[RMDB]
RNA sequence: GGGAACGACUCGAGUAGAGUCGAAAAAGCUGCUCGCAAUCGCGCCAAAGGACCAGCGUAGCGCGCGGCGCUAAAUUUAACUGCUCAGGUUGCAAAAAUAGGUCCUUUAUUGAGCAGCCAUACCAGAAUACUAUUACUCCUUCGGGAGUAAUAGUAUAAAAGAAACAACAACAACAAC
Reactivity to DMS in 0.01 (KOAc 150mM, MgCl2 10mM, bicine 150mM(pH8.5), 24C), signal-to-noise 5, nucleotides 027 to 126: a120g020c000u000g000c000u010c000g030c280a140a050u010c110g020c010g010c020c060a060a080a040g010g000a010c010c000a170g030c020g020u000a100g020c170g020c020g000c040g000g010c000g020c030u000a050a100a110u010u000u000a050a080c020u000g010c100u010c240a120g000g010u010u010g010c170a030a070a050a030a040u000a080g000g010u000c010c010u000u000u010a050u010u000g000a020g000c010a000g010c010c020a050u010a160c020c010a150g000a150
Reactivity to 2A3 in 0.01 (KOAc 150mM, MgCl2 10mM, bicine 150mM(pH8.5), 24C), signal-to-noise 1, nucleotides 027 to 126: a000g000c000u030g010c010u010c010g030c010a050a170u150c160g000c000g000c030c010a010a030a040g010g010a000c000c010a010g000c020g020u040a050g040c070g000c010g000c030g230g000c000g020c010u010a000a000a130u120u140u050a050a020c010u030g100c080u040c200a060g060g040u090u070g030c010a000a020a060a000a000u060a160g000g000u000c000c030u010u000u010a070u020u030g000a000g000c010a010g000c000c000a060u040a040c010c000a010g130a120